[RMDB]
RNA sequence: GGGAACGACUCGAGUAGAGUCGAAAACAUGGAGUCUUCGGACUCCAUGCACUACCGAAAUAAUGCCUCGGUAUAAAAGGCAAACCCUUGGAUACAAGGGAACGAUGUCACGAUUCGUCGUGACAAAAGAUCUCACAUUGUUCGCAAUGUGAGAUCUAAAAGAAACAACAACAACAAC
Reactivity to 2A3 in 0.01 (KOAc 150mM, MgCl2 10mM, bicine 150mM(pH8.5), 24C), signal-to-noise 4, nucleotides 027 to 126: c000a000u000g010g000a000g000u010c010u020u080c260g080g020a000c010u000c010c000a000u000g000c000a030c020u060a020c000c000g040a050a070a100u200a050a050u070g010c000c000u010c010g000g000u050a090u160a300a080a010a010g000g000c000a020a090a200c010c000c000u030u000g040g020a100u140a300c000a000a010g000g020g020a010a000c050g070a060u080g000u000c000a000c010g020a020u040u050c190g040u010c000g000u080g020a000c000a000a010a000
Reactivity to DMS in 0.01 (KOAc 150mM, MgCl2 10mM, bicine 150mM(pH8.5), 24C), signal-to-noise 3, nucleotides 027 to 126: c000a000u000g000g000a020g010u000c000u000u000c230g020g000a000c010u000c000c000a000u000g020c040a180c030u000a060c000c000g000a060a110a110u000a170a130u010g020c000c000u010c000g000g000u000a080u000a030a010a060a010g010g030c010a020a100a190c010c000c000u010u000g010g000a220u020a150c010a010a000g030g010g030a110a040c260g000a130u000g000u000c010a000c000g000a020u000u010c140g010u000c000g020u000g000a010c000a020a060a100